[RMDB]
RNA sequence: GGGAACGACUCGAGUAGAGUCGAAAACAGCGGGUUUAUUCUAUCGUUAUCUCCCUGCAUAACGGGGCACUCAGAGGAUGGUGGCGACGACGACGACGACUCGUGCAUGACUGGGCACCCUGACAUGGCCUCCGUAUAUAUUCGUAUAUACGGAGGCAAAAGAAACAACAACAACAAC
Reactivity to DMS in 0.01 (KOAc 150mM, MgCl2 10mM, bicine 150mM(pH8.5), 24C), signal-to-noise 3, nucleotides 027 to 126: c080a050g000c040g010g000g020u010u070u000a090u010u010c060u010a110u000c060g000u060u000a060u030c050u010c020c000c010u000g000c090a070u000a060a140c100g000g000g010g000c040a150c080u000c090a070g020a050g000g010a080u000g000g050u040g010g000c100g000a090c110g000a040c070g020a050c100g040a110c120g020a160c120u010c090g020u020g020c090a030u030g010a100c040u000g010g020g010c100a080c030c010c000u000g020a080c120a040u000g000
Reactivity to 2A3 in 0.01 (KOAc 150mM, MgCl2 10mM, bicine 150mM(pH8.5), 24C), signal-to-noise 6, nucleotides 027 to 126: c020a020g020c040g000g030g040u060u110u100a130u110u080c070u080a120u120c040g010u040u040a070u040c060u020c000c010c010u030g010c060a020u030a170a030c050g020g010g030g000c020a010c020u040c020a040g050a040g150g030a030u100g050g050u040g000g020c020g020a060c020g010a000c020g000a000c030g010a020c010g030a040c000u010c020g010u030g030c020a040u060g030a050c020u010g020g010g000c030a020c000c000c010u040g030a050c020a120u120g100